Background:
Chemical mapping of a 177-nucleotide RNA with 2A3 and DMS. Source: RMDB library TTRDES, as collected in RNAgym. For DMS the reverse transcriptase was MarathonRT. The reactions ran in a buffer of 150 mM KOAc, 10 mM MgCl2 and 150 mM bicine (pH 8.5), at 24 C. For 2A3 the reverse transcriptase was SuperScript II with manganese. For DMS, 12,483 sequencing reads were counted.
[RMDB]
RNA sequence: GGGAACGACUCGAGUAGAGUCGAAAAGAUAUGGAGACUGCUGAGGCGAUAAGCCACUCUCGGAAACGAGAGAAUGGCUUUUGACGCCUUUGCAGUCUCCUAAGUCAAAGCGUACUUCGGUACGCAACCUAACUCCUUAGUUCGCUAAGGAGUUAGGAAAAGAAACAACAACAACAAC
Reactivity to 2A3 in 0.01 (KOAc 150mM, MgCl2 10mM, bicine 150mM(pH8.5), 24C), signal-to-noise 3, nucleotides 027 to 126: g020a010u070a030u150g010g010a000g000a000c010u010g010c010u030g020a010g000g020c050g050a060u030a130a000g000c010c000a020c000u010c000u000c010g010g040a110a080a030c020g000a000g020a000g010a050a140u050g010g000c020u040u030u020u080g090a040c040g000c000c000u000u010u000g000c000a000g000u010c000u000c000c000u000a000a000g010u000c010a050a040a000g010c000g000u000a010c010u050u110c270g090g000u000a010c000g000c000a010a010
Reactivity to DMS in 0.01 (KOAc 150mM, MgCl2 10mM, bicine 150mM(pH8.5), 24C), signal-to-noise 7, nucleotides 027 to 126: g000a030u000a300u010g020g000a020g010a020c000u000g010c000u000g000a010g010g030c000g020a160u000a020a020g010c000c000a080c010u000c000u010c000g010g000a140a080a260c010g000a030g010a000g020a070a080u010g010g010c000u000u000u000u000g010a220c050g010c000c000u000u010u000g000c010a000g000u000c000u000c000c000u000a000a060g010u000c040a130a100a160g010c000g020u000a000c000u000u000c230g030g010u000a010c000g020c000a030a030